Chemical mapping of a 207-nucleotide RNA with 2A3.
For 2A3, 302 sequencing reads were counted.
The data come from the RNA Mapping Database (RMDB), library OK3TST.

RNA sequence: GGGAACGACUCGAGUAGAGUCGAAAAGACUAGGUUUCUGCACUUAUAAAAUGGGGAUAAUUUCUGCCCAGUUAUAUUUCUCUGAAUUGUAAAUGUCAAAUAUAAUGAAUGCAGGAGAUAUCAUUAUCACUCUAGACAAUUUUAUCACAUUUUUUCAACCGUACUUCCAUUUCGAUGGAAGUACGGUAAAAGAAACAACAACAACAAC
Reactivity to 2A3 in 0.01 (KOAc 150mM, MgCl2 10mM, bicine 150mM(pH8.5), 24C), signal-to-noise 1, nucleotides 027 to 156: g010a010c040u030a040g000g070u000u090u000c010u030g040c010a100c040u300u150a170u090a190a180a100a040u070g000g030g030g000a010u040a000a040u000u200u040c000u000g010c020c020c000a010g010u030u000a000u000a000u040u060u010c060u000c010u070g010a110a270u300u140g040u200a130a080a030u120g070u030c010a010a040a000u000a000u000a000a090u070g140a030a030u060g000c010a000g040g000a000g010a040u160a030u170c060a100u000u160a030u070c000a060c060u160c010u140a060g070a150c030a100a090u090u050u030u100a100u180c040a030c010a050u110u100u070u050u120u120c000a090